Structure probing data (2A3) for a 177-nucleotide construct. Conditions: 150 mM KOAc, 10 mM MgCl2 and 150 mM bicine (pH 8.5), 24 C. 2A3 adducts were read by reverse transcription with SuperScript II with manganese. The 2A3 profile rests on 396 reads.

RNA sequence: GGGAACGACUCGAGUAGAGUCGAAAAUUAUGUGCUGGGCGCUGGACAAUGCUUUUUGCACUCAAUGAGGCCCUCCGUCCUACAUGGCCAUGUGCUUUGGCCCUGCACCAGCGGUAUGAUUUACAGCACUCCGAGGCAUCUUCGGAUGCCUCGGAGUAAAAGAAACAACAACAACAAC
Reactivity to 2A3 in 0.01 (KOAc 150mM, MgCl2 10mM, bicine 150mM(pH8.5), 24C), signal-to-noise 1, nucleotides 027 to 126: u000u000a130u180g040u220g000c000u030g000g000g060c150g010c000u070g020g000a040c040a000a260u150g220c210u050u060u100u300u060g000c000a030c000u080c000a150a290u110g070a070g000g080c000c000c210u010c020c000g110u090c000c000u070a070c010a020u020g000g000c000c000a000u060g010u000g000c030u000u000u130g090g000c000c000c000u000g010c000a020c020c000a030g010c010g000g000u160a060u160g000a130u010u210u000a270c190a140g180c000